[RMDB]
RNA sequence: GGGAACGACUCGAGUAGAGUCGAAAAAAGGUGCCAUCAUAUCGGUUAAGAACUCUUAACUCUGAUGGCUUUCGAGUUAUGUGGUGCAUUGAAGCUCUCCCUUCAAAUGGUCCUACAGUUCCGUGAAUAACCCCUUAUGGUUCGCCAUAAGGGGUUAAAAAGAAACAACAACAACAAC
Reactivity to DMS in 0.01 (KOAc 150mM, MgCl2 10mM, bicine 150mM(pH8.5), 24C), signal-to-noise 3, nucleotides 027 to 126: a050a050g000g020u010g010c000c000a010u000c010a040u000a090u010c210g000g000u000u000a010a010g020a260a180c300u020c010u000u000a010a010c000u010c090u000g000a020u000g010g000c000u000u000u010c030g000a090g000u000u000a060u020g000u000g000g000u010g020c010a070u010u000g000a100a040g000c080u010c090u000c070c150c000u000u000c050a020a060a080u000g010g000u000c030c000u000a030c080a090g010u000u000c010c020g030u010g010a060a100
Notes:
Conditions: 150 mM KOAc, 10 mM MgCl2 and 150 mM bicine (pH 8.5), 24 C. The record gives the reactivity of an RNA of 177 nucleotides to DMS. The DMS profile rests on 2,426 reads.